Chemical mapping of a 177-nucleotide RNA with DMS and 2A3. For 2A3 the reverse transcriptase was SuperScript II with manganese. The 2A3 profile rests on 11,681 reads. Reactivities are given for positions 27 through 126. The data come from the RNA Mapping Database (RMDB), library OK2TRN.

RNA sequence: GGGAACGACUCGAGUAGAGUCGAAAAGGUAGCAGAGAAGAGACUAGCCUUCAGACUAGAUAGUAUCACACUACCGGUACAUAGUAGAGACAUACAUAGAUGAGUAUGACACAUCAGAGCUGCCAUGCCCUGGUAUUUUAUUCGUAAAAUACCAGGGAAAAGAAACAACAACAACAAC
Reactivity to DMS in 0.01 (KOAc 150mM, MgCl2 10mM, bicine 150mM(pH8.5), 24C), signal-to-noise 8, nucleotides 027 to 126: g010g010u000a030g030c070a100g010a110g010a130a110g000a140g000a120c030u000a030g010c010c040u010u000c190a160g010a130c030u000a030g020a120u010a060g000u000a050u000c060a070c130a170c040u000a030c050c030g010g010u010a060c110a060u000a060g010u000a060g000a100g000a100c090a060u000a050c070a090u000a110g000a080u010g010a080g010u010a030u000g010a080c090a040c060a050u000c060a070g010a110g010c030u000g000c010c030a090u000g010
Reactivity to 2A3 in 0.01 (KOAc 150mM, MgCl2 10mM, bicine 150mM(pH8.5), 24C), signal-to-noise 7, nucleotides 027 to 126: g030g000u020a010g000c070a010g050a010g020a220a020g070a020g020a070c010u020a020g060c010c000u100u110c060a090g040a140c020u030a010g020a090u070a060g070u030a020u050c020a030c020a020c130u090a040c050c000g000g020u030a040c030a040u100a020g060u030a020g040a000g020a110c010a020u070a020c020a030u130a060g160a150u120g040a030g030u030a030u080g030a030c000a010c000a110u070c020a010g030a010g120c010u010g000c020c010a040u090g040